[RMDB]
RNA sequence: GGGAACGACUCGAGUAGAGUCGAAAAAAAAAGAUAUGGAGAUCGUGCGAACUCUACUACCCACCUUCCACAUCGGAAACGAUGUAGGAAGAGGUAGAGGAGGUAUACGAUCUCCUAAGUCAAAAAACUGAACUAGUAUGUUCGCAUACUAGUUCAGAAAAGAAACAACAACAACAAC
Reactivity to 2A3 in 0.01 (KOAc 150mM, MgCl2 10mM, bicine 150mM(pH8.5), 24C), signal-to-noise 1, nucleotides 027 to 126: a050a000a000a010a010g060a020u110a010u140g000g000a010g000a010u000c000g020u020g050c110g110a200a140c030u080c030u040a220c000u030a030c010c030c030a240c070c050u000u000c000c000a010c000a020u000c000g050g010a000a050a040c010g000a000u020g010u080a270g040g020a010a000g000a010g020g000u000a010g040a160g000g030a070g000g040u100a070u030a080c000g010a010u000c000u000c000c000u000a000a020g000u000c000a000a010a030a080a030a140
Reactivity to DMS in 0.01 (KOAc 150mM, MgCl2 10mM, bicine 150mM(pH8.5), 24C), signal-to-noise 2, nucleotides 027 to 126: a040a060a100a080a120g000a040u020a300u020g000g010a010g030a000u000c010g020u000g040c170g010a150a170c010u000c020u000a300c000u000a030c010c000c030a190c260c010u000u000c000c000a020c000a000u000c000g000g000a100a090a150c000g000a010u000g000u000a090g010g000a010a000g000a040g000g000u000a010g070a300g000g000a020g000g000u010a100u020a010c000g010a000u000c010u000c000c000u000a010a100g010u040c040a000a120a030a060a060a070

An RNA of 177 nucleotides, treated with 2A3 and DMS and read out base by base. The reactions ran in a buffer of 150 mM KOAc, 10 mM MgCl2 and 150 mM bicine (pH 8.5), at 24 C. Reactivities are given for positions 27 through 126.